[RMDB]
RNA sequence: GGGAACGACUCGAGUAGAGUCGAAAAGCAGUCGACUUCGGUCGACUGCAAAGAAUCACCACCAGCAGGUGAAAGCUGGAGGCAAAGAGCCAAAAUAAAUAUAAACGCUGAGCUUCGGCUCAGCGAACUUAGCAGAAUCUUUCGAGAUUCUGCUAAGAAAAGAAACAACAACAACAAC
Reactivity to 2A3 in 0.01 (KOAc 150mM, MgCl2 10mM, bicine 150mM(pH8.5), 24C), signal-to-noise 2, nucleotides 027 to 126: g000c000a010g000u000c010g020a000c010u040u130c210g040g010u000c000g000a010c000u010g010c000a000a000a000g000a020a080u090c030a020c070c010a010c000c010a000g000c030a030g180g170u200g210a130a020a040g030c020u000g000g010a050g010g000c040a120a160a150g110a130g000c000c010a000a010a120a020u130a020a120a000u220a030u050a120a140a010c020g000c000u010g010a000g000c000u030u100c300g020g010c000u000c000a000g000c020g010a000a010
Reactivity to DMS in 0.01 (KOAc 150mM, MgCl2 10mM, bicine 150mM(pH8.5), 24C), signal-to-noise 1, nucleotides 027 to 126: g000c020a000g000u000c000g010a020c000u010u010c160g020g010u000c000g000a000c010u010g020c000a000a000a050g020a080a120u010c120a140c010c000a160c000c010a000g020c000a080g010g060u000g010a070a160a110g040c000u000g000g000a150g010g000c040a090a080a120g040a070g000c010c040a040a040a080a150u000a040a140a160u000a110u010a110a130a280c010g000c000u000g000a000g010c000u020u000c190g020g000c000u000c000a010g000c000g010a000a030